[RMDB]
Annotation:
This 207-nucleotide RNA was probed chemically with 2A3. For 2A3 the reverse transcriptase was SuperScript II with manganese. The reactions ran in a buffer of 150 mM KOAc, 10 mM MgCl2 and 150 mM bicine (pH 8.5), at 24 C.
RNA sequence: GGGAACGACUCGAGUAGAGUCGAAAAACACCGGACUAGGCGUACGCGCCUAAUCCGGUGAGGGUCAGACGAGCAGACACCCAUUGAAGUUCUGCUCUACCGUUAAAAGGAAGUAAACCAUCAUGAAAGAAGUGCGCUUGGUUCGCCAAGCGCACAACUAUUCAAGAUACUUCGGUAUCUUGAAUAGAAAAGAAACAACAACAACAAC
Reactivity to 2A3 in 0.01 (KOAc 150mM, MgCl2 10mM, bicine 150mM(pH8.5), 24C), signal-to-noise 2, nucleotides 027 to 156: a010c000a000c000c010g000g000a000c000u000a010g000g000c000g020u040a030c220g060c010g000c100c000u000a000a020u010c000c000g010g000u030g000a050g000g000g000u030c070a030g010a170c060g000a040g010c000a000g000a000c010a030c030c000c070a060u070u220g010a030a000g030u070u000c000u000g010c010u000c000u000a000c000c000g060u090u150a140a120a060a050g060g070a070a040g040u150a050a090a020c040c040a150u200c080a090u220g150a030a040a150g070a170a010g050u000g000c030g000c010u010u000g060g000u040u090c100g040c110c000a000a000g010c000g000c020a000c000a000a000